This 177-nucleotide RNA was probed chemically with 2A3 and DMS. For 2A3 the reverse transcriptase was SuperScript II with manganese. Reactivities are given for positions 27 through 126. The DMS profile rests on 884 reads. For DMS the reverse transcriptase was MarathonRT. For 2A3, 759 sequencing reads were counted.

RNA sequence: GGGAACGACUCGAGUAGAGUCGAAAAGGGUUUGGAUUACAUCAAUAGUCACAUGAGCAGAAGUAUACAGAACAAGAAGUACUGCGGUUAUUCAAGUUCAAAGUUCACACUAUCGCAAUAAAUUGAACACCGAACAUGAAUUCGUUCAUGUUCGGUGAAAAGAAACAACAACAACAAC
Reactivity to 2A3 in 0.01 (KOAc 150mM, MgCl2 10mM, bicine 150mM(pH8.5), 24C), signal-to-noise 1, nucleotides 027 to 126: g100g000g030u060u080u040g030g020a040u000u080a060c030a060u030c000a060a060u030a070g080u030c020a000c010a110u100g040a040g010c000a010g000a120a010g060u020a040u050a170c080a020g080a090a000c020a010a070g060a100a010g040u010a060c040u070g010c000g050g040u040u010a020u050u030c010a050a040g010u000u040c040a010a190a100g020u050u080c010a090c020a020c040u030a020u190c010g050c060a020a130u150a220a030a050u150u060g010a090a010
Reactivity to DMS in 0.01 (KOAc 150mM, MgCl2 10mM, bicine 150mM(pH8.5), 24C), signal-to-noise 2, nucleotides 027 to 126: g010g000g030u000u000u000g020g010a060u000u000a100c090a150u000c020a060a080u000a050g020u000c040a080c100a050u000g010a100g000c090a070g000a090a060g060u010a070u000a110c120a130g000a010a040c050a020a120g010a010a060g000u000a020c040u000g040c070g020g000u000u000a120u000u040c020a020a180g020u000u000c050a080a040a080g000u000u000c090a040c070a120c090u000a080u000c080g000c080a020a020u010a000a030a110u000u010g000a030a150